[RMDB]
RNA sequence: GGGAACGACUCGAGUAGAGUCGAAAAGCGGUUUAAUUGGAUUCAACGCCGGGAAGCUUACCGGGAUCGACAGUUGUAUGAAGGCCAGGCUGAAGACCUUGCCGGACUAGCUGAGAGGAGGUGCAUGAACGUCAAAAAUUUUCGAAUUUUUGACGUUAAAAGAAACAACAACAACAAC
Reactivity to DMS in 0.01 (KOAc 150mM, MgCl2 10mM, bicine 150mM(pH8.5), 24C), signal-to-noise 8, nucleotides 027 to 126: g010c050g010g010u010u020u030a070a090u010u020g000g010a140u010u010c070a070a100c140g000c040c010g000g000g020a080a100g010c130u010u010a080c060c040g000g000g000a080u010c070g010a130c080a050g000u000u010g020u020a030u010g010a290a090g010g000c020c130a040g000g000c030u020g010a120a100g000a170c020c020u000u010g000c010c000g000g010a200c130u010a040g000c020u000g000a110g010a060g000g000a080g000g010u010g010c060a070u020g010
Reactivity to 2A3 in 0.01 (KOAc 150mM, MgCl2 10mM, bicine 150mM(pH8.5), 24C), signal-to-noise 6, nucleotides 027 to 126: g060c030g010g090u030u070u110a090a100u090u120g100g020a050u090u070c050a060a030c050g010c020c020g010g020g040a080a030g040c040u050u050a050c010c010g010g020g040a060u060c020g040a040c030a050g020u030u030g150u160a120u110g060a050a000g000g000c010c010a000g020g000c040u110g090a120a010g020a090c000c000u000u020g000c000c000g000g000a000c020u020a020g020c000u010g040a020g010a020g100g030a030g010g030u020g000c000a010u090g050

This 177-nucleotide RNA was probed chemically with DMS and 2A3. For 2A3 the reverse transcriptase was SuperScript II with manganese.